[RMDB]
RNA sequence: GGGAACGACUCGAGUAGAGUCGAAAACUCGUAAUCGCCUUUGCUAUUCUAUAUCUUGCCCACGUCGACUAGAGCAGCAGGCCCGUCUCCAUUUGAAGGUCCAACCUGUAUUAAGUGGGGGAUCAACUUCGAUUACAGAUAAACAAGAGGAAGAUCAGUAUUUUAUGAGUUUCGACUCAUAAAAUACAAAAGAAACAACAACAACAAC
Reactivity to DMS in 0.01 (KOAc 150mM, MgCl2 10mM, bicine 150mM(pH8.5), 24C), signal-to-noise 2, nucleotides 027 to 156: c030u010c050g010u010a040a070u020c080g010c010c030u000u010u000g030c050u000a120u010u000c070u010a140u000a080u000c050u000u000g000c060c020c050a100c160g010u000c010g000a140c000u010a060g020a050g020c010a090g020c010a050g000g010c020c060c040g030u010c010u000c010c090a130u000u000u000g020a100a040g010g000u000c050c040a070a110c100c040u010g020u010a130u000u000a040a130g010u000g010g030g010g050g000a100u000c020a070a100c070u000u000c030g010a160u000u000a180c030a070g000a100u000a090a070a080c040a070a120g000a050g010g000a070a110g000a160u000c020a180
Reactivity to 2A3 in 0.01 (KOAc 150mM, MgCl2 10mM, bicine 150mM(pH8.5), 24C), signal-to-noise 7, nucleotides 027 to 156: c010u010c030g050u070a030a060u060c040g030c020c030u070u070u120g010c030u060a090u140u120c050u040a100u030a070u200c070u060u120g070c010c010c000a020c030g050u050c030g030a210c040u040a040g010a010g060c020a000g000c010a010g020g030c000c020c020g070u040c030u010c060c030a110u060u060u160g050a040a010g020g000u040c040c020a060a060c020c020u050g050u140a130u130u120a180a040g050u090g010g010g010g010g000a000u060c030a020a060c030u090u080c020g020a020u020u070a050c020a050g100a070u160a090a100a020c060a040a070g040a020g100g030a050a030g020a060u120c060a050
The record gives the reactivity of an RNA of 207 nucleotides to DMS and 2A3. The DMS profile rests on 4,158 reads. Conditions: 150 mM KOAc, 10 mM MgCl2 and 150 mM bicine (pH 8.5), 24 C. High 2A3 reactivity points to a flexible backbone, as in loops and unpaired stretches.